[RMDB]
RNA sequence: GGGAACGACUCGAGUAGAGUCGAAAAGCAUGUCAUAUUUUUGCCUUGACCACAAACCUAGGUUAGCUAUACCUCUUGUUUCUGGAGGUACAGUAUUUGGUAUUUAUCGUGCUACAUGUUCAGGAAGUCCUGAUGUUGCAGUGUUUAAUAAAUUGGCAUGAGGAGUAGUUUUCGAACUACUCCUCAUAAAAGAAACAACAACAACAAC
Reactivity to 2A3 in 0.01 (KOAc 150mM, MgCl2 10mM, bicine 150mM(pH8.5), 24C), signal-to-noise 6, nucleotides 027 to 156: g070c040a050u070g030u100c060a060u070a160u200u080u070u130u130g020c010c000u040u090g030a020c020c010a040c090a120a130a070c030c040u070a070g060g050u070u070a000g030c010u020a010u000a040c020c000u000c000u100u190g020u010u030u000c020u030g010g000a010g020g010u000a010c010a000g020u020a150u090u140u150g060g000u040a080u020u070u020a110u090c080g010u020g010c000u020a020c000a020u120g060u080u110c010a020g010g060a150a090g110u110c000c000u020g010a030u020g010u020u030g010c020a040g030u000g090u240u060u060a090a100u130a070a110a160u100u130g020g030c050
Reactivity to DMS in 0.01 (KOAc 150mM, MgCl2 10mM, bicine 150mM(pH8.5), 24C), signal-to-noise 1, nucleotides 027 to 156: g010c000a050u000g000u010c050a090u000a070u010u000u010u010u000g020c010c000u000u020g030a100c000c020a230c090a080a100a120c140c060u000a120g030g020u010u000a090g030c040u000a040u000a020c010c000u000c010u000u000g010u000u010u000c120u010g000g020a050g000g010u000a010c000a010g040u000a040u010u000u000g060g040u000a030u000u000u010a050u000c130g030u010g010c030u010a010c020a010u000g000u000u000c030a180g050g010a150a120g000u000c000c040u000g030a120u000g020u000u000g000c010a120g030u000g000u000u000u000a030a070u000a030a070a180u000u010g020g000c160
An RNA of 207 nucleotides, treated with 2A3 and DMS and read out base by base. The 2A3 profile rests on 3,645 reads. Values cover nucleotides 27 to 156. It was measured as part of the RMDB library OK3TST. High DMS reactivity at an A or C suggests that its Watson-Crick edge is free.